[RMDB]
RNA sequence: GGGAACGACUCGAGUAGAGUCGAAAAAUGAGAACAAUGCACACUUAAUUGCUCAAUCGCCUUGCUAUCAUAAGGAUAAUUGGUUGACCCACUGGUGCAUUGACCGAGCGAUUUGAGCUUGCUCAGAUCACUCAGCGGUGUUCGCACCGCUGAGUGAAAAAGAAACAACAACAACAAC
Reactivity to DMS in 0.01 (KOAc 150mM, MgCl2 10mM, bicine 150mM(pH8.5), 24C), signal-to-noise 1, nucleotides 027 to 126: a190u000g010a010g010a110a150c040a010a000u000g000c000a010c010a170c190u000u000a090a080u000u000g030c110u000c000a030a070u000c010g010c000c000u010u020g040c130u000a050u020c140a100u000a060a150g000g020a070u020a050a130u020u000g030g010u000u010g020a060c040c000c030a080c210u000g000g020u000g000c000a010u000u000g000a140c190c110g000a000g030c010g000a050u000u030u010g000a040g000c080u000u000g010c000u000c020a040g000a040
Reactivity to 2A3 in 0.01 (KOAc 150mM, MgCl2 10mM, bicine 150mM(pH8.5), 24C), signal-to-noise 2, nucleotides 027 to 126: a000u110g020a010g030a090a000c020a040a010u060g020c010a020c010a020c040u130u180a080a060u160u100g020c030u000c010a040a020u000c010g110c020c000u030u070g040c040u110a080u230c040a090u120a290a060g140g020a030u070a120a050u170u110g010g010u000u070g040a050c020c010c010a060c060u070g030g000u000g000c010a030u000u020g020a000c040c100g020a030g000c000g040a030u070u050u120g030a010g000c040u040u030g000c020u000c010a030g010a210